[RMDB]
RNA sequence: GGGAACGACUCGAGUAGAGUCGAAAAGGGGUCAUAAGGGAGGCAUCCUCACUUGUUGACGAGCUGAAGCCUCCACGGCUCGAUGGAGUGGGAUGCCGAAGAACUUAUGACGGAGGCACCCAAAACGAUAAAUGAUUGUUCGCAAUCAUUUAUCGAACAGCUGUGUAACGUUCGCGUUACACAGCUGAAAAGAAACAACAACAACAAC
Reactivity to 2A3 in 0.01 (KOAc 150mM, MgCl2 10mM, bicine 150mM(pH8.5), 24C), signal-to-noise 2, nucleotides 027 to 156: g030g000g090g000u000c000a010u000a010a000g000g020g000a000g020g010c000a010u020c020c000u300c050a010c010u180u180g300u300u300g220a040c000g010a000g000c000u020g040a150a010g040c000c000u060c020c000a000c010g000g010c010u030c010g090a210u300g210g010a010g000u000g000g010g010a000u010g000c020c000g010a000a000g000a000a000c000u000u000a000u030g000a000c000g010g000a000g000g050c020a060c010c000c020a060a100a000a010c020g030a000u000a000a010a000u000g020a000u000u010g060u030u070c300g000c140a000a000u010c000a000u000u000u010a000u000c000g010a080a010